[RMDB]
RNA sequence: GGGAACGACUCGAGUAGAGUCGAAAAUUCUAUGUGGUGGUGGUUACUACGUCAAACCUGGAGGUACCAGUAGCGGAGAUGCCACCACUGCAUAUGCCAAUAGUGUCUUUAACAUUUUGCAGGCGACCGGCCGUGGCGUUCGCGCCACGGAAAAGAAACAACAACAACAAC
Reactivity to DMS in 0.01 (KOAc 150mM, MgCl2 10mM, bicine 150mM(pH8.5), 24C), signal-to-noise 6, nucleotides 027 to 129: u020u060c110u040a030u000g040u000g050g040u020g000g080u020g010g050u010u040a130c010u000a030c000g050u040c090a090a100a190c300c010u030g050g000a230g050g000u090a130c000c010a030g020u010a240g030c020g030g000a000g040a300u030g020c000c000a040c010c020a020c000u010g030c000a030u010a030u000g000c000c050a070a120u000a070g020u020g020u010c150u050u060u080a080a060c020a100u020u020u010u040g030c070a140g020g020c000g000a070c000c000g020g060
Reactivity to 2A3 in 0.01 (KOAc 150mM, MgCl2 10mM, bicine 150mM(pH8.5), 24C), signal-to-noise 5, nucleotides 027 to 129: u050u020c000u030a000u000g000u010g000g010u000g000g000u010g000g010u040u090a150c010u010a030c010g110u170c110a090a110a130c000c000u020g030g000a120g140g170u220a170c000c000a000g010u030a010g000c010g000g000a000g030a070u110g000c000c000a000c000c000a000c000u000g000c000a010u010a010u100g010c000c000a030a040u110a080g100u070g050u070c100u020u210u080a090a040c040a070u070u060u020u130g050c070a080g010g010c020g040a040c000c000g040g010